RNA sequence: GGGAACGACUCGAGUAGAGUCGAAAAGCCCCUGGACUUGUGGCCCCUGUAGAAGAGCAGCUUGGGCAGGGUGUGAUGGCCAUCUCUGUCUCUAGGGGCCCUGUGGAGGAGAGGCUGCAGCUAGAGGAGCUGUCUACACAUUCGUGUGUAGACAGCUAAAAGAAACAACAACAACAAC
Reactivity to DMS in 0.01 (KOAc 150mM, MgCl2 10mM, bicine 150mM(pH8.5), 24C), signal-to-noise 2, nucleotides 027 to 126: g000c060c010c000c100u010g000g000a130c070u020u000g000u020g050g020c010c000c020c020u030g040u050a130g030a110a060g010a070g000c260a040g000c290u010u000g000g000g030c020a030g010g010g040u010g050u040g000a030u040g000g040c000c000a060u030c130u000c010u000g000u000c000u030c040u020a030g000g020g010g000c020c010c020u000g000u000g000g040a090g000g000a120g030a070g000g000c000u030g000c000a080g020c070u000a030g000a120g020g020
Reactivity to 2A3 in 0.01 (KOAc 150mM, MgCl2 10mM, bicine 150mM(pH8.5), 24C), signal-to-noise 2, nucleotides 027 to 126: g010c000c030c000c010u100g050g030a060c020u020u070g030u070g050g000c010c000c000c000u000g040u130a010g010a230a020g030a010g040c060a010g020c000u050u050g020g000g020c000a000g020g020g030u040g090u070g060a160u110g030g060c020c000a070u050c060u000c000u020g130u050c000u010c030u070a000g010g010g000g000c000c000c000u000g000u000g030g060a050g000g060a050g000a020g040g000c010u040g000c020a030g030c020u060a000g010a070g070g050